[RMDB]
RNA sequence: GGGAACGACUCGAGUAGAGUCGAAAACGGGUACGCCAACGCCGCGAGGACAUGCUGCGCCAUCCUGCAUUUCUGUCCAAGCAGCUCCCUCCCGAACCAGCGCACGACGACGGCGUCGCGGCCGUCUUCUAUAAGAUUACUUCGGUAAUCUUAUAGAAAAAGAAACAACAACAACAAC
Reactivity to DMS in 0.01 (KOAc 150mM, MgCl2 10mM, bicine 150mM(pH8.5), 24C), signal-to-noise 9, nucleotides 027 to 126: c080g010g010g000u010a060c070g000c030c050a070a090c110g010c020c040g020c050g010a290g000g010a070c070a040u000g010c120u000g010c050g010c050c040a070u010c070c040u010g000c050a070u010u020u010c120u010g010u010c030c050a070a240g010c030a070g000c040u010c020c010c020u010c010c010c020g010a080a080c070c050a080g010c010g010c060a060c120g010a090c110g000a020c000g000g000c010g010u010c190g000c110g010g000c010c010g010u000c000u000
Reactivity to 2A3 in 0.01 (KOAc 150mM, MgCl2 10mM, bicine 150mM(pH8.5), 24C), signal-to-noise 9, nucleotides 027 to 126: c030g010g010g030u080a030c050g030c040c030a080a020c050g020c030c010g020c020g020a040g010g010a020c020a050u090g010c020u030g010c030g040c030c000a100u100c010c030u030g020c020a060u060u130u080c050u070g040u010c020c010a030a020g010c010a020g000c010u030c010c000c000u020c010c010c000g020a040a040c030c020a030g020c030g030c040a030c080g140a010c040g000a000c000g030g010c000g020u060c030g000c020g050g010c000c000g010u000c000u000